Source information
The record gives the reactivity of an RNA of 177 nucleotides to DMS and 2A3.
RNA sequence: GGGAACGACUCGAGUAGAGUCGAAAACACGCAGCCGUCACGUGCUAGCCAUGCAGCGCGUGGGUCAGGACACCGUGCUGAAGUGGCGGAAGCGUCGGAGUCACGGUGACCGAUUUCGCGACUCGACGCAGGUUCGGAGGUUCGCCUUCGGACUUGCAAAAGAAACAACAACAACAAC
Reactivity to DMS in 0.01 (KOAc 150mM, MgCl2 10mM, bicine 150mM(pH8.5), 24C), signal-to-noise 9, nucleotides 027 to 126: c080a080c060g010c050a080g010c010c020g010u020c010a030c020g020u020g010c030u010a090g020c050c120a080u020g010c040a030g000c010g010c010g020u000g000g010g010u010c060a100g020g000a120c030a040c040c030g010u000g010c010u000g000a170a110g010u020g000g000c010g000g010a120a080g000c010g010u000c050g010g000a120g000u020c010a030c010g010g010u010g000a080c030c040g010a090u010u010u010c050g010c030g000a060c020u000c030g010a120c150
Reactivity to 2A3 in 0.01 (KOAc 150mM, MgCl2 10mM, bicine 150mM(pH8.5), 24C), signal-to-noise 9, nucleotides 027 to 126: c060a000c020g020c010a010g030c010c010g060u060c010a000c020g020u030g010c010u020a030g030c020c030a090u170g000c020a010g010c000g000c010g010u040g000g010g020u040c060a070g010g030a010c000a000c010c010g010u010g000c000u040g030a180a040g020u050g050g000c000g010g050a090a020g070c010g020u030c030g070g060a020g060u150c020a000c020g010g000u020g030a060c010c020g040a060u050u090u080c050g000c010g040a040c000u000c040g030a030c080
The RNA was probed in 150 mM KOAc, 10 mM MgCl2 and 150 mM bicine (pH 8.5) at 24 C. For DMS the reverse transcriptase was MarathonRT. For 2A3 the reverse transcriptase was SuperScript II with manganese.